[RMDB]
RNA sequence: GGGAACGACUCGAGUAGAGUCGAAAACUAUCGCUGGCGUGAUUGACGAUAGCAUGAAACUGCAAGACCGUAUCCAUGAGGUAGCCGUGGCUAUCAUGCUGCACUGCUACAAACACAAUGAGUUUGCCAGUGCUUCAAACUUCGGUUUGAAGCACUGAAAAGAAACAACAACAACAAC
Reactivity to DMS in 0.01 (KOAc 150mM, MgCl2 10mM, bicine 150mM(pH8.5), 24C), signal-to-noise 2, nucleotides 027 to 126: c050u010a020u000c060g010c030u010g030g020c080g030u000g010a080u020u010g030a090c050g000a060u010a040g030c030a040u000g000a040a070a080c080u020g040c060a050a110g010a080c030c040g000u020a050u000c030c050a040u000g000a050g000g010u010a020g030c020c170g030u000g030g020c020u000a070u010c140a080u000g020c050u000g040c040a030c040u000g000c000u000a040c050a060a050a050c090a090c130a100a070u010g010a090g010u020u000u010g010c170
Reactivity to 2A3 in 0.01 (KOAc 150mM, MgCl2 10mM, bicine 150mM(pH8.5), 24C), signal-to-noise 2, nucleotides 027 to 126: c010u010a020u090c030g000c000u020g090g030c040g140u110g070a230u100u060g000a050c050g050a040u040a000g000c010a030u100g050a070a110a090c030u060g020c040a050a000g030a070c000c070g030u040a060u030c020c050a060u110g050a050g170g010u010a010g030c020c010g030u010g040g020c000u010a050u300c060a080u170g000c000u050g020c020a010c030u020g000c020u000a040c000a030a110a030c100a010c030a080a200u130g070a100g180u040u080u030g010c040
Chemical mapping of a 177-nucleotide RNA with DMS and 2A3. DMS adducts were read by reverse transcription with MarathonRT. Conditions: 150 mM KOAc, 10 mM MgCl2 and 150 mM bicine (pH 8.5), 24 C.